[RMDB]
Description:
An RNA of 177 nucleotides, treated with DMS and 2A3 and read out base by base. It was measured as part of the RMDB library OK2TST. For DMS the reverse transcriptase was MarathonRT. Values cover nucleotides 27 to 126.
RNA sequence: GGGAACGACUCGAGUAGAGUCGAAAACUGGUGUUCUAUGCCGCCGAUCAUGGUGAAUCUAUCGACGAUAAUUCCCACUUCCACGGCACGCCACGUGAAAUGGCACCGCCAGAGCAAUUCCGUGUGCACUGUAUCUGGUCUUCGGACCAGAUACAGUAAAAGAAACAACAACAACAAC
Reactivity to DMS in 0.01 (KOAc 150mM, MgCl2 10mM, bicine 150mM(pH8.5), 24C), signal-to-noise 3, nucleotides 027 to 126: c040u000g010g020u000g010u000u000c100u000a130u000g000c000c040g040c030c300g000a030u010c080a100u010g020g000u000g000a020a040u000c160u010a070u000c060g030a150c190g020a040u000a020a080u000u000c000c000c000a120c150u000u000c000c180a070c060g010g000c020a040c160g000c000c000a010c080g000u020g010a100a110a170u000g010g020c010a110c180c030g010c010c020a010g000a110g020c080a050a170u000u000c020c010g010u000g010u000g060c120
Reactivity to 2A3 in 0.01 (KOAc 150mM, MgCl2 10mM, bicine 150mM(pH8.5), 24C), signal-to-noise 2, nucleotides 027 to 126: c020u040g000g020u060g050u120u080c100u100a100u130g000c000c010g010c020c060g010a040u050c050a100u160g100g010u160g070a000a030u020c050u130a020u030c040g300a120c150g000a120u030a040a030u030u000c000c000c000a000c040u050u030c020c040a020c010g020g010c010a000c060g000c000c030a020c040g120u200g160a020a070a110u030g020g000c020a010c000c040g000c010c010a020g000a000g030c020a050a130u030u070c020c010g100u120g060u070g090c050